[RMDB]
Source information: An RNA of 177 nucleotides, treated with 2A3 and DMS and read out base by base. DMS adducts were read by reverse transcription with MarathonRT.
RNA sequence: GGGAACGACUCGAGUAGAGUCGAAAAUGUAGUAGAAACACCAUCCAGCAUAAGUACAGAUGAAAGGCACCUGCUCAGCAGCAGAUUAAUUCAUCAAGCCACUAUUGGAUCCAAUCAGGGGGGAUGAAUCAGUUUCUUAGUUCGCUAAGAAACUGAUAAAAGAAACAACAACAACAAC
Reactivity to 2A3 in 0.01 (KOAc 150mM, MgCl2 10mM, bicine 150mM(pH8.5), 24C), signal-to-noise 1, nucleotides 027 to 126: u140g030u070a080g030u020a030g120a080a150a000c030a010c010c000a020u050c000c000a020g010c000a060u020a190a070g010u040a060c010a020g040a040u000g020a070a030a060g000g020c010a020c010c000u020g010c000u060c110a130g040c040a010g020c000a010g050a000u040u130a040a080u000u050c010a010u000c030a020a040g080c000c000a030c040u040a060u040u040g050g010a100u090c020c030a050a070u070c080a060g000g000g030g000g100g010a030u060g010a020
Reactivity to DMS in 0.01 (KOAc 150mM, MgCl2 10mM, bicine 150mM(pH8.5), 24C), signal-to-noise 3, nucleotides 027 to 126: u010g020u010a070g020u000a060g010a150a070a070c070a100c030c020a060u000c020c020a050g000c080a060u000a050a120g010u010a060c110a120g000a040u000g000a010a050a130g010g010c230a070c080c010u000g010c060u010c110a130g000c100a050g020c030a040g010a070u000u000a060a130u000u000c030a030u000c030a080a120g020c030c040a020c070u000a080u000u000g000g000a070u020c080c040a040a050u020c150a090g000g010g000g020g000g000a110u020g000a070
The RNA was probed in 150 mM KOAc, 10 mM MgCl2 and 150 mM bicine (pH 8.5) at 24 C. For 2A3 the reverse transcriptase was SuperScript II with manganese.